The record gives the reactivity of an RNA of 177 nucleotides to 2A3 and DMS.
The data come from the RNA Mapping Database (RMDB), library OK1LIB.
For 2A3 the reverse transcriptase was SuperScript II with manganese.
Values cover nucleotides 27 to 126.

[RMDB]
RNA sequence: GGGAACGACUCGAGUAGAGUCGAAAAGCCGCAGCGAAAACCGACGCUGCAGCCGACGGCGGCGGGGUCGUCGUGGGCGGCGACUGUGACGCAUCGAACCUGCGCAUCCAACCCACCGUGGUCGUCGCCGUCACAAAACAUUCGUGUUUUGUGACGGAAAAGAAACAACAACAACAAC
Reactivity to 2A3 in 0.01 (KOAc 150mM, MgCl2 10mM, bicine 150mM(pH8.5), 24C), signal-to-noise 4, nucleotides 027 to 126: g050c010c010g000c000a010g020c010g150a010a040a090a130c070c070g070a020c020g010c000u000g000c030a010g020c020c010g030a030c020g000g000c000g030g000c010g010g020g000g030u030c010g010u010c010g010u150g010g070g080c040g020g020c000g000a000c020u070g060u090g090a080c030g010c030a060u120c080g090a070a090c020c000u010g000c000g000c000a040u040c030c030a050a090c030c000c010a060c040c040g040u090g060g010u030c000g010u000c010g010
Reactivity to DMS in 0.01 (KOAc 150mM, MgCl2 10mM, bicine 150mM(pH8.5), 24C), signal-to-noise 2, nucleotides 027 to 126: g030c040c080g010c000a050g000c000g000a030a070a110a080c220c190g010a090c000g000c020u030g000c000a080g010c050c080g000a000c000g000g000c000g010g000c030g030g000g000g000u010c020g040u050c040g020u010g010g010g010c070g000g000c000g010a040c050u070g010u050g060a090c000g000c010a100u010c120g020a220a120c180c150u010g000c000g010c060a100u010c070c100a120a120c100c010c020a150c090c100g000u020g000g040u000c000g000u010c000g000